An RNA of 207 nucleotides, treated with 2A3 and DMS and read out base by base.
Conditions: 150 mM KOAc, 10 mM MgCl2 and 150 mM bicine (pH 8.5), 24 C.
The data come from the RNA Mapping Database (RMDB), library M2RFPK.
The DMS profile rests on 2,341 reads.
RNA sequence: GGGAACGACUCGAGUAGAGUCGAAAAGUCCUGCCAUGAGACCGCAACGAGAGCAUGUCGCAUCGAAUGGACUCGGGGAGUCGGCAGCUUGCCCCACGGAUGAGCGCCUAAUGCCGGCAAUCGGGAAAAUAGACUGGAUAGUUCGCUAUCCAGUCAAGCCAUUUAUACUCUUCGGAGUAUAAAUGGCAAAAGAAACAACAACAACAAC
Reactivity to 2A3 in 0.01 (KOAc 150mM, MgCl2 10mM, bicine 150mM(pH8.5), 24C), signal-to-noise 4, nucleotides 027 to 156: g070u030c000c010u000g010c010c010a080u080g020a010g020a100c030c070g030c090a050a140c130g070a050g010a020g160c050a100u180g040u130c060g000c030a040u020c040g030a050a030u050g020g030a060c020u030c070g000g000g010g010a070g020u030c000g000g000c010a020g010c010u040u090g020c000c000c010c050a060c100g030g010a200u110g020a010g030c030g050c020c030u100a120a050u070g000c010c000g010g000c040a010a080u130c040g000g010g050a030a050a000a100u120a050g000a000c010u000g000g000a000u000a000g010u060u030c080g000c150u000a000u000c000c000a000g000u000c000a000a000
Reactivity to DMS in 0.01 (KOAc 150mM, MgCl2 10mM, bicine 150mM(pH8.5), 24C), signal-to-noise 2, nucleotides 027 to 156: g020u000c040c010u000g010c050c050a050u020g000a230g000a070c050c090g020c020a070a260c050g040a150g000a300g020c040a120u020g020u000c050g030c040a140u010c040g010a220a190u000g000g000a080c040u000c030g000g000g000g000a220g040u010c040g040g000c000a070g020c060u000u010g030c000c000c020c100a270c190g000g010a150u010g000a050g060c040g040c070c070u000a060a110u000g000c010c000g000g030c050a180a050u000c010g000g020g010a130a050a150a090u000a080g010a030c010u000g000g000a040u000a000g010u000u010c300g070c010u000a030u010c000c020a000g040u000c000a020a090